[RMDB]
RNA sequence: GGGAACGACUCGAGUAGAGUCGAAAAGAUAUGGAUAUAUCUAUCCAUGCCGAUGAAAUCGGAAACGAUGGAGGCAUGAUAGAGUAUAUCCUAAGUCAAAACCUCGAGAACUUCGGUUCUCGAGGAACACAUUUUACGUGUUCGCACGUAAAAUGUGAAAAGAAACAACAACAACAAC
Reactivity to 2A3 in 0.01 (KOAc 150mM, MgCl2 10mM, bicine 150mM(pH8.5), 24C), signal-to-noise 3, nucleotides 027 to 126: g050a030u090a040u160g000g000a000u000a010u010a010u000c000u000a000u020c210c040a000u000g000c010c000g210a300u040g040a060a030a000u010c010g020g000a100a030a060c010g010a000u000g000g060a030g000g000c000a000u010g000a000u000a010g020a010g080u030a010u000a000u020c020c000u000a140a020g050u010c010a000a020a080a300c000c000u020c000g020a010g000a000a010c000u130u300c300g080g000u000u000c010u000c000g000a000g000g000a010a010
Reactivity to DMS in 0.01 (KOAc 150mM, MgCl2 10mM, bicine 150mM(pH8.5), 24C), signal-to-noise 3, nucleotides 027 to 126: g000a050u000a300u000g010g000a000u000a000u000a030u000c000u010a010u000c150c100a010u000g010c000c000g010a100u030g000a070a130a020u000c000g010g000a150a070a190c010g000a010u000g000g000a060g020g010c010a000u000g000a020u000a010g010a030g010u010a000u000a010u000c000c000u000a040a150g000u000c020a110a060a150a190c000c000u000c010g010a010g000a010a000c000u000u000c170g020g000u000u000c000u010c000g010a010g000g000a030a070
Structure probing data (2A3 and DMS) for a 177-nucleotide construct. The RNA was probed in 150 mM KOAc, 10 mM MgCl2 and 150 mM bicine (pH 8.5) at 24 C. For 2A3 the reverse transcriptase was SuperScript II with manganese. DMS adducts were read by reverse transcription with MarathonRT. For 2A3, 5,116 sequencing reads were counted.